[RMDB]
RNA sequence: GGGAACGACUCGAGUAGAGUCGAAAAGCCUGCCCGCACCGGACUGGACGCAGCGGAUCAAGGCGGCGUUCGGCACCGGACUGCGGCUGGUCAGCGGGCAGCUGGUGCCGCGCACCGACGAAGGCAAGACUCAGUAUGGUUUCGACCAUACUGAGUCAAAAGAAACAACAACAACAAC
Reactivity to DMS in 0.01 (KOAc 150mM, MgCl2 10mM, bicine 150mM(pH8.5), 24C), signal-to-noise 3, nucleotides 027 to 126: g010c050c010u000g010c070c020c000g030c020a160c090c070g010g020a280c030u000g000g020a010c030g000c020a060g010c010g020g020a080u010c250a090a180g000g000c000g030g020c010g000u000u010c040g020g000c020a050c010c020g000g010a130c090u000g010c010g020g000c010u000g000g020u000c070a110g000c010g020g010g000c030a030g000c030u000g000g020u010g020c000c070g030c060g040c020a160c040c000g020a060c040g000a120a080g010g000c040a080a100
Reactivity to 2A3 in 0.01 (KOAc 150mM, MgCl2 10mM, bicine 150mM(pH8.5), 24C), signal-to-noise 2, nucleotides 027 to 126: g000c000c010u010g020c080c000c000g000c010a040c020c010g130g000a010c030u050g000g030a010c020g000c020a020g010c010g070g070a070u210c150a060a060g150g010c030g020g020c020g000u040u090c000g020g050c090a090c050c000g010g020a020c070u030g030c000g000g010c000u010g050g010u060c080a010g020c010g030g100g000c040a010g020c070u100g040g060u000g000c040c100g070c010g000c020a030c060c070g040a080c030g040a060a070g050g020c090a090a040

The data come from the RNA Mapping Database (RMDB), library OK2TST. The record gives the reactivity of an RNA of 177 nucleotides to DMS and 2A3. 2A3 adducts were read by reverse transcription with SuperScript II with manganese. For DMS the reverse transcriptase was MarathonRT. For DMS, 2,517 sequencing reads were counted. The RNA was probed in 150 mM KOAc, 10 mM MgCl2 and 150 mM bicine (pH 8.5) at 24 C.